[RMDB]
RNA sequence: GGGAACGACUCGAGUAGAGUCGAAAAAGGACUUUGAAGCCAAGAACAUCAUGUCUGAGGAGUAUACUAACUCCAAGAGCUUCUGUUUUGACCUACGUAUGGCCACACAGUGGAAGAAGCUUCCGACUAGGGCAGAGAAUGAUGCUAUGAUUGCCCAGCCCUAAAAUGCUUUCGAGCAUUUUAGGGCAAAAGAAACAACAACAACAAC
Reactivity to 2A3 in 0.01 (KOAc 150mM, MgCl2 10mM, bicine 150mM(pH8.5), 24C), signal-to-noise 1, nucleotides 027 to 156: a000g040g010a010c090u070u140u280g140a160a000g000c000c000a020a000g030a040a060c020a010u090c020a000u130g090u110c020u000g020a040g050g020a000g040u000a100u150a300c160u160a140a020c000u010c020c020a020a000g050a000g000c000u020u000c000u030g220u010u170u010u070g080a060c000c000u020a020c050g030u090a060u160g020g020c010c000a020c000a000c020a060g030u050g060g000a100a040g020a000a000g020c000u020u020c000c000g080a130c080u140a040g030g000g030c000a000g000a000g040a030a100u080g020a020u010g000c020u080a060u190g060a160u060u110g060c020c000c010a020
Source: RMDB library OK3TST, as collected in RNAgym.
Chemical mapping of a 207-nucleotide RNA with 2A3.
For 2A3, 447 sequencing reads were counted.